[RMDB]
RNA sequence: GGGAACGACUCGAGUAGAGUCGAAAAACUGGGUUCUAGGUUUUGUGAAGGCUGACUCGGUCUACAAGACCUAACCCAUAGACUACUAGUCGACUAGACCGAGUUAGCCUUUAGUCAUUAGUGGUCGCUACUGCGUUCAAUUCGUUGAAUGCAGUAGAAAAGAAACAACAACAACAAC
Reactivity to 2A3 in 0.01 (KOAc 150mM, MgCl2 10mM, bicine 150mM(pH8.5), 24C), signal-to-noise 2, nucleotides 027 to 126: a000c020u020g000g000g020u060u030c040u050a020g020g010u000u020u020u040g030u020g010a010a000g000g010c010u000g000a040c010u000c000g000g010u000c000u020a010c010a020a010g020a000c000c000u010a020a020c000c000c000a000u060a000g010a000c010u030a020c010u020a050g020u020c090g020a010c000u010a000g000a000c000c000g010a020g020u040u050a000g000c000c000u000u010u000a000g000u000c000a010u020u020a010g020u010g050g010u020c000g010
Reactivity to DMS in 0.01 (KOAc 150mM, MgCl2 10mM, bicine 150mM(pH8.5), 24C), signal-to-noise 9, nucleotides 027 to 126: a090c060u000g010g010g010u000u000c100u010a080g020g010u000u000u000u000g020u000g010a020a010g010g010c000u000g010a040c020u000c010g010g000u000c000u010a010c020a040a210g000a010c020c060u000a040a050c050c030c040a080u000a040g010a060c060u000a050c100u000a060g010u000c060g000a200c300u000a010g000a010c000c000g000a020g010u000u000a030g010c000c000u000u000u000a010g000u000c040a050u000u000a030g010u000g000g010u000c040g000